[RMDB]
An RNA of 177 nucleotides, treated with DMS and read out base by base. Reactivities are given for positions 27 through 126. Conditions: 150 mM KOAc, 10 mM MgCl2 and 150 mM bicine (pH 8.5), 24 C. For DMS the reverse transcriptase was MarathonRT.
RNA sequence: GGGAACGACUCGAGUAGAGUCGAAAAGCGCGGGUCUUGACGGUCUUUUUGAUUGUCUGGUUGCCGAUGUUGAUGGGCAGUUAUCAGGCAUUUAAGAUAUCAAUGGGACAGGUGCGCGAGCAUAAGAGUACACUCAUCCAUUCGUGGAUGAGUGUACAAAAGAAACAACAACAACAAC
Reactivity to DMS in 0.01 (KOAc 150mM, MgCl2 10mM, bicine 150mM(pH8.5), 24C), signal-to-noise 2, nucleotides 027 to 126: g020c000g040c020g020g020g000u000c030u000u000g000a100c300g010g010u000c010u000u000u020u030u000g010a010u010u000g020u000c000u000g000g000u010u010g000c000c000g020a060u000g000u010u010g010a070u000g010g010g010c010a080g010u010u000a030u000c010a020g000g000c020a000u000u010u000a050a060g020a020u010a040u000c020a060a220u010g000g010g010a010c020a060g010g010u010g020c020g030c030g000a130g010c170a090u010a070a120g000a240